[RMDB]
Conditions: 150 mM KOAc, 10 mM MgCl2 and 150 mM bicine (pH 8.5), 24 C. Structure probing data (2A3) for a 207-nucleotide construct. The data come from the RNA Mapping Database (RMDB), library OK3TST.
RNA sequence: GGGAACGACUCGAGUAGAGUCGAAAAUUGAGGCAUGUUACAAUCAUAGGAUGAUUAUACUAACAUAGACUGGUGGUUAUAAAUGAACUAGGAUGUAUGAUUUAUGAGUAGCAUCUAAUGGGUGCUAAAAUAUCUUAAUACUUUUUAUUUAGCAUGCACCCAGUGACAUGUUCGCAUGUCACUGGGUAAAAGAAACAACAACAACAAC
Reactivity to 2A3 in 0.01 (KOAc 150mM, MgCl2 10mM, bicine 150mM(pH8.5), 24C), signal-to-noise 1, nucleotides 027 to 156: u010u120g070a080g020g000c000a000u020g020u000u040a020c020a010a010u070c060a090u070a120g090g020a060u120g010a010u050u010a020u070a100c020u040a170a000c010a150u040a050g060a180c070u000g000g000u010g000g010u190u040a060u050a110a150a100u070g110a010a000c040u010a030g000g010a050u070g000u020a050u000g010a060u000u090u170a050u090g000a030g040u050a000g000c000a000u020c030u060a050a100u210g140g000g000u000g000c000u000a000a130a000a000u010a010u030c000u090u170a080a030u090a190c030u000u080u140u050u010a180u070u020u070a000g000c000a000u070g000c000